[RMDB]
RNA sequence: GGGAACGACUCGAGUAGAGUCGAAAACGCACUAGCCACAUGUCAAGUGUUCUAUUGGACAGUGCAGGAAUAAGGCAUUUCUGUCAUUGAAGAAACUUCUACUGGACACCCCUGCCCUUAACUCUUCAUUUUUUUUAAGCCAGGUAGCUUAAAGGAGCGUAUUCUAUCUCUUCGGAGAUAGAAUACGAAAAGAAACAACAACAACAAC
Reactivity to 2A3 in 0.01 (KOAc 150mM, MgCl2 10mM, bicine 150mM(pH8.5), 24C), signal-to-noise 5, nucleotides 027 to 156: c080g010c000a030c040u050a030g040c020c010a040c030a080u120g050u110c080a120a090g030u020g020u110u060c060u110a170u070u170g020g030a020c010a010g020u010g020c000a000g030g060a030a070u140a120a070g150g010c050a020u000u070u030c020u050g130u090c020a070u030u080g040a080a070g050a090a140a030c060u090u050c020u090a080c030u060g000g020a010c010a020c010c020c000c010u000g010c010c020c000u040u060a080a060c020u040c030u130u050c060a110u130u060u020u030u030u000u010u070a030a000g010c020c020a070g110g100u160a030g050c020u010u040a030a020a010g030g010a030g040
Reactivity to DMS in 0.01 (KOAc 150mM, MgCl2 10mM, bicine 150mM(pH8.5), 24C), signal-to-noise 2, nucleotides 027 to 156: c040g010c060a090c060u000a070g020c020c030a070c080a110u010g010u000c040a060a100g000u010g020u010u010c040u000a190u010u010g000g000a150c000a040g020u000g010c010a100g010g010a050a040u010a110a130g010g040c070a120u010u000u010c010u040g010u000c050a130u010u010g020a090a220g010a150a090a080c030u020u010c040u020a050c040u000g000g010a060c020a110c060c020c020c010u010g010c020c020c040u000u000a040a110c070u000c030u010u000c060a020u000u000u000u000u000u000u000u000a020a010g040c030c030a120g040g000u000a040g020c010u000u000a010a020a030g010g010a050g010

The data come from the RNA Mapping Database (RMDB), library OK3TST.
Chemical mapping of a 207-nucleotide RNA with 2A3 and DMS.
For DMS, 3,661 sequencing reads were counted.
Reactivities are given for positions 27 through 156.
2A3 adducts were read by reverse transcription with SuperScript II with manganese.
Conditions: 150 mM KOAc, 10 mM MgCl2 and 150 mM bicine (pH 8.5), 24 C.
In probing experiments dimethyl sulfate is read out at A N1 and C N3, which are open when not base-paired.